Structure probing data (2A3 and DMS) for a 207-nucleotide construct. Values cover nucleotides 27 to 156. Conditions: 150 mM KOAc, 10 mM MgCl2 and 150 mM bicine (pH 8.5), 24 C.

RNA sequence: GGGAACGACUCGAGUAGAGUCGAAAAGACUCGUGAAAACAGUGAAUGUCUCUGGAAUAUCCUCAAACAAUGUAUCUGAUUGUGUUUGUGUGACCUCGCGAUAUCCAAGUUCAUAUUCAUCCAUUGAUUCAACAUGUCCACCAAGCGCCGCAGCAAGCAUUGUCUCGCUAUUCGUAGCGAGACAAUGAAAAGAAACAACAACAACAAC
Reactivity to 2A3 in 0.01 (KOAc 150mM, MgCl2 10mM, bicine 150mM(pH8.5), 24C), signal-to-noise 5, nucleotides 027 to 156: g020a000c020u020c050g050u060g060a050a040a040a030c040a050g010u010g060a110a030u030g060u040c010u000c050u100g040g020a110a030u080a050u120c010c040u030c020a050a050a050c030a040a050u170g050u120a130u080c090u130g070a210u110u160g070u020g050u050u020u020g040u000g030u060g070a090c040c020u030c040g060c040g020a020u020a030u090c020c010a020a030g030u090u080c040a030u050a060u120u060c020a040u020c050c030a050u050u080g050a020u090u100c020a020a030c010a080u070g020u020c020c010a030c040c020a100a060g040c020g020c060c030g040c000a010g000c030a070a010g040
Reactivity to DMS in 0.01 (KOAc 150mM, MgCl2 10mM, bicine 150mM(pH8.5), 24C), signal-to-noise 1, nucleotides 027 to 156: g010a070c020u000c020g010u010g000a060a060a090a080c050a080g040u020g000a100a060u000g020u000c040u000c020u000g000g020a080a190u000a130u000c010c040u000c020a050a040a040c060a030a090u000g030u000a050u000c100u020g010a090u000u000g010u000g010u000u000u000g000u020g010u000g020a040c000c020u000c040g030c050g000a060u000a030u000c040c010a080a100g040u000u020c040a050u000a060u010u000c020a110u000c010c040a070u000u010g000a220u000u000c050a020a000c080a040u000g000u020c020c020a110c020c050a070a180g020c050g030c000c040g000c020a030g020c050a080a150g020